The record gives the reactivity of an RNA of 177 nucleotides to 2A3 and DMS. For DMS the reverse transcriptase was MarathonRT. The 2A3 profile rests on 1,006 reads. 2A3 adducts were read by reverse transcription with SuperScript II with manganese.
RNA sequence: GGGAACGACUCGAGUAGAGUCGAAAACAGGCGAUGCGCGGCAAAUUGCAGGAUUUCAUGAAAAUUAUCCGUGACGAUCCGGCGGUGGAUAAUGUCACCGGAUUUACUGGCGGUUCGCGGGUGAAUACACUGGAGUCGUAUUCGUACGACUCCAGUGAAAAGAAACAACAACAACAAC
Reactivity to 2A3 in 0.01 (KOAc 150mM, MgCl2 10mM, bicine 150mM(pH8.5), 24C), signal-to-noise 1, nucleotides 027 to 126: c010a010g000g050c000g040a020u080g060c000g030c000g010g040c000a080a050a100u110u100g020c060a010g000g100a050u060u060u060c060a070u120g180a080a080a040a060u110u100a070u000c000c020g020u000g030a060c030g020a020u000c000c010g020g010c040g130g110u110g000g030a070u050a140a140u300g060u060c000a010c030c040g000g000a000u020u020u040a040c000u000g110g010c030g000g010u010u050c050g000c050g000g080g000u030g010a030a000u020a080
Reactivity to DMS in 0.01 (KOAc 150mM, MgCl2 10mM, bicine 150mM(pH8.5), 24C), signal-to-noise 2, nucleotides 027 to 126: c030a060g000g020c040g010a020u000g030c030g030c040g010g000c050a060a020a120u000u000g030c050a110g010g010a060u000u000u020c060a030u000g010a090a020a080a110u000u020a040u010c020c000g000u010g000a030c150g000a050u000c030c030g000g030c090g000g000u020g000g000a050u010a040a070u010g000u010c000a040c040c020g020g010a060u010u000u000a070c070u000g030g030c100g010g000u000u000c070g000c040g010g000g000u000g000a100a100u010a100